[RMDB]
RNA sequence: GGGAACGACUCGAGUAGAGUCGAAAACGCGCCGGUGGUCGCGCGCGUCGCGGCCUGGAUCAGGGAGGCAUGCUCUCCCUCCGGUUGAUUGGCGGCCCGGCGCACCUGGACGACAAGGUCGGCUGCCGGCGCUACGAUAAUUCGUUAUCGUAGCGCCAAAAGAAACAACAACAACAAC
Reactivity to DMS in 0.01 (KOAc 150mM, MgCl2 10mM, bicine 150mM(pH8.5), 24C), signal-to-noise 2, nucleotides 027 to 126: c090g040c080g030c000c000g000g010u000g010g010u000c000g030c240g000c150g020c070g000u010c040g040c110g000g010c000c000u000g030g000a010u000c060a060g000g000g000a010g000g050c070a180u040g020c110u000c010u010c020c000c000u010c020c070g020g010u060u010g010a060u000u000g000g040c220g000g000c000c000c010g010g010c010g000c030a120c010c000u000g000g020a140c120g030a110c140a080a100g010g010u050c020g020g040c040u000g010c040c000
Reactivity to 2A3 in 0.01 (KOAc 150mM, MgCl2 10mM, bicine 150mM(pH8.5), 24C), signal-to-noise 4, nucleotides 027 to 126: c040g000c000g000c010c010g030g000u060g030g030u010c010g000c030g030c050g050c050g100u050c000g040c140g010g030c010c020u120g080g010a050u060c040a010g010g020g030a000g020g000c100a120u260g040c050u050c010u030c020c020c000u000c020c020g110g070u050u030g020a070u020u070g070g080c030g010g010c000c000c000g020g000c010g010c010a020c000c000u030g040g090a070c090g020a030c140a130a020g020g010u000c000g020g010c000u020g020c020c000
Structure probing data (DMS and 2A3) for a 177-nucleotide construct. For 2A3 the reverse transcriptase was SuperScript II with manganese. Reactivities are given for positions 27 through 126. High DMS reactivity at an A or C suggests that its Watson-Crick edge is free. It was measured as part of the RMDB library OK1LIB.